[RMDB]
RNA sequence: GGGAACGACUCGAGUAGAGUCGAAAACUGCCUCUCCUUGUCGGUGAAUCCUCCCCUGAGAGGCCUCUUCCUAGGUCCGGAGUCUACCUCCAUCUGGUCCGUCCGGGCCCUCUUCGCCGGAGGCGCCAUACGACGCCCUUCGGGGCGUCGAAAAGAAACAACAACAACAAC
Reactivity to DMS in 0.01 (KOAc 150mM, MgCl2 10mM, bicine 150mM(pH8.5), 24C), signal-to-noise 2, nucleotides 027 to 129: c150u040g000c070c000u020c010u050c010c100u040u040g050u010c150g040g020u040g090a150a120u070c050c040u010c060c000c050c040u000g020a030g010a090g000g000c020c030u010c050u050u030c030c090u020a040g030g020u010c090c050g040g020a000g000u010c030u050a110c050c020u000c050c060a170u120c100u030g000g050u040c100c000g000u010c020c120g070g000g010c040c020c010u030c000u050u090c080g060c030c020g000g010a040g060g000c170g050c010c050a000u000a100
Reactivity to 2A3 in 0.01 (KOAc 150mM, MgCl2 10mM, bicine 150mM(pH8.5), 24C), signal-to-noise 2, nucleotides 027 to 129: c050u070g010c010c020u050c000u010c050c000u050u110g190u150c100g000g050u120g070a070a140u080c010c030u000c000c020c010c020u040g010a000g000a010g020g000c020c000u020c000u040u000c000c010u000a070g010g010u000c040c000g030g000a020g000u000c090u110a080c000c030u020c050c000a090u080c050u040g000g000u020c030c060g050u040c020c030g000g000g000c000c010c000u020c010u040u020c000g010c020c040g020g000a010g030g000c030g020c020c020a050u120a080

Structure probing data (DMS and 2A3) for a 170-nucleotide construct.